[RMDB]
RNA sequence: GGGAACGACUCGAGUAGAGUCGAAAAAUUGGAGAAAGCUCACCACUUACCCGGUCAGUCACUCCCCUGUAGCUUUCUCUUUCUUGGAGAAAGGAAAAGACCCAAAGGGUUGGAAGCAAUAUGUGAAUACGCGAUUUAUAUUCGUAUAAAUCGCGUAAAAAGAAACAACAACAACAAC
Reactivity to DMS in 0.01 (KOAc 150mM, MgCl2 10mM, bicine 150mM(pH8.5), 24C), signal-to-noise 1, nucleotides 027 to 126: a080u010u000g010g010a110g010a010a100a100g010c030u000c080a070c070c070a080c070u000u010a100c140c070c120g020g010u000c130a050g000u010c040a210c060u000c010c010c080c100u000g000u010a090g000c030u000u000u030c010u000c000u000u000u000c100u030u010g010g000a130g030a000a030a020g000g000a060a080a170a120g010a070c020c010c030a060a110a080g010g000g000u000u000g000g000a080a080g010c080a080a050u000a040u010g010u000g000a080a180